[RMDB]
RNA sequence: GGGAACGACUCGAGUAGAGUCGAAAAACCUCAGUCUUCGGACUGAGGUGAGCGGAGCAUGGUGGCCGUGGGAACUCCUCCUUGGUGACAAGGGGCCACGGGGUGCGGCACGCUUCGGCGUGCCGAACUAUCCCCGCAUGUUCGCAUGCGGGGAUAGAAAAGAAACAACAACAACAAC
Reactivity to DMS in 0.01 (KOAc 150mM, MgCl2 10mM, bicine 150mM(pH8.5), 24C), signal-to-noise 2, nucleotides 027 to 126: a040c000c000u000c020a010g000u000c000u000u010c200g020g010a010c010u000g000a010g010g010u000g010a040g020c040g000g010a080g010c080a040u000g020g020u000g000g010c000c000g030u010g010g010g010a100a080c130u010c090c000u010c000c000u000u010g010g000u010g000a210c010a010a020g000g000g010g000c020c010a020c030g000g000g010g010u000g020c010g010g010c000a000c000g020c010u000u000c100g020g010c010g030u000g000c020c010g000a010a040

This 177-nucleotide RNA was probed chemically with DMS. The reactions ran in a buffer of 150 mM KOAc, 10 mM MgCl2 and 150 mM bicine (pH 8.5), at 24 C. Values are in units of 0.01, from 0 to 300, in steps of 10.